[RMDB]
RNA sequence: GGGAACGACUCGAGUAGAGUCGAAAAGUCCGUCCGUAGUCUUAGGCAAAACCUAUCUGUAAGGGCAUUGACAAGCCUAGGUAGGUGCGUAACCUUAAAAUCCGUGAAGCCGUCCGUGUCUGAUUAAUCUCUCGCUUAAGUUCGCUUAAGCGAGAGAAAAAGAAACAACAACAACAAC
Reactivity to DMS in 0.01 (KOAc 150mM, MgCl2 10mM, bicine 150mM(pH8.5), 24C), signal-to-noise 1, nucleotides 027 to 126: g010u010c030c060g040u010c020c010g010u000a070g010u000c020u040u000a010g010g000c070a070a090a230a110c010c010u000a020u000c000u010g010u020a110a130g010g020g020c000a100u000u000g010a190c180a120a150g000c000c010u030a040g000g000u000a000g010g040u000g030c150g000u000a110a080c010c000u010u010a100a060a120a110u000c070c030g000u010g020a150a070g040c040c020g000u000c060c050g030u010g030u010c050u000g000a120u010u000a040a200
Notes
The record gives the reactivity of an RNA of 177 nucleotides to DMS. The reactions ran in a buffer of 150 mM KOAc, 10 mM MgCl2 and 150 mM bicine (pH 8.5), at 24 C. For DMS, 692 sequencing reads were counted.